[RMDB]
RNA sequence: GGGAACGACUCGAGUAGAGUCGAAAAGACUGGCAGGCACGGUACCGUUCAAGCCAGAGUACCUCAUCCAUAGCCUGCGGUGCAUAUCGUUUUUUUUUUUUACGAUAUGCGCAAGGAUGAAAAUAGAGGGUUGCCUUUACUUCGGUGGAGGCAACCCAAAAGAAACAACAACAACAAC
Reactivity to 2A3 in 0.01 (KOAc 150mM, MgCl2 10mM, bicine 150mM(pH8.5), 24C), signal-to-noise 6, nucleotides 027 to 126: g070a050c040u060g050g000c000a040g000g040c060a010c110g030g060u100a100c080c070g050u070u130c120a120a020g060c020c010a030g000a010g020u030a030c000c010u010c010a040u000c020c010a060u080a080g020c010c010u030g000c020g010g000u020g000c000a000u000a000u000c000g000u000u000u000u000u000u000u010u010u000u000u000u050a000c010g000a000u000a000u000g000c000g010c000a010a030g010g010a010u050g090a060a020a050a060u180a050g100a110
Reactivity to DMS in 0.01 (KOAc 150mM, MgCl2 10mM, bicine 150mM(pH8.5), 24C), signal-to-noise 4, nucleotides 027 to 126: g000a110c030u010g000g000c010a050g000g020c150a060c080g000g020u040a100c150c030g010u010u020c070a060a080g010c010c030a050g000a120g010u010a090c060c020u020c000a010u000c000c010a140u040a150g000c020c020u020g000c080g020g010u000g020c000a010u000a000u000c000g000u010u000u010u000u020u000u030u020u050u030u000u000a040c000g020a030u000a000u000g010c000g010c030a030a040g020g000a010u000g010a040a080a100a100u020a060g020a300